[RMDB]
RNA sequence: GGGAACGACUCGAGUAGAGUCGAAAACGGGUAAGGGGCCCACGUACAUUCGCGUGGCCGACAGCGAGCUGUACGCGGACUGGAGCUCGGACAGCGAGGGGGAACGCGACCAGGUCCCGUGGCUGGCCGCUUUAUGUGGAUUCGUCCACAUAAAGCGAAAAGAAACAACAACAACAAC
Reactivity to DMS in 0.01 (KOAc 150mM, MgCl2 10mM, bicine 150mM(pH8.5), 24C), signal-to-noise 5, nucleotides 027 to 126: c070g020g010g010u020a070a130g000g010g000g000c080c000c030a050c030g020u010a080c100a150u030u000c040g010c030g010u000g000g020c040c020g010a100c070a140g020c000g000a160g010c110u000g010u010a030c050g000c080g020g000a140c050u010g000g000a240g010c050u000c030g000g000a090c100a060g010c040g000a110g000g000g000g010g020a120a090c090g020c080g010a090c050c050a070g010g000u010c020c010c020g000u010g000g000c030u000g010g000c230
Reactivity to 2A3 in 0.01 (KOAc 150mM, MgCl2 10mM, bicine 150mM(pH8.5), 24C), signal-to-noise 7, nucleotides 027 to 126: c030g010g030g070u120a060a080g060g020g030g020c030c010c020a020c010g020u040a040c010a150u040u100c050g020c030g050u070g060g080c030c030g040a020c020a030g040c010g040a020g000c050u030g030u120a050c050g000c030g050g020a020c010u040g050g040a030g050c030u030c020g040g040a060c050a020g050c030g020a070g000g030g010g000g020a040a070c050g010c030g090a060c020c020a030g010g060u060c010c000c010g000u030g050g000c030u030g030g010c040

Source information
An RNA of 177 nucleotides, treated with DMS and 2A3 and read out base by base. The data come from the RNA Mapping Database (RMDB), library OK1LIB. For 2A3, 9,231 sequencing reads were counted. DMS (dimethyl sulfate) methylates the pairing face of unpaired adenines and cytosines.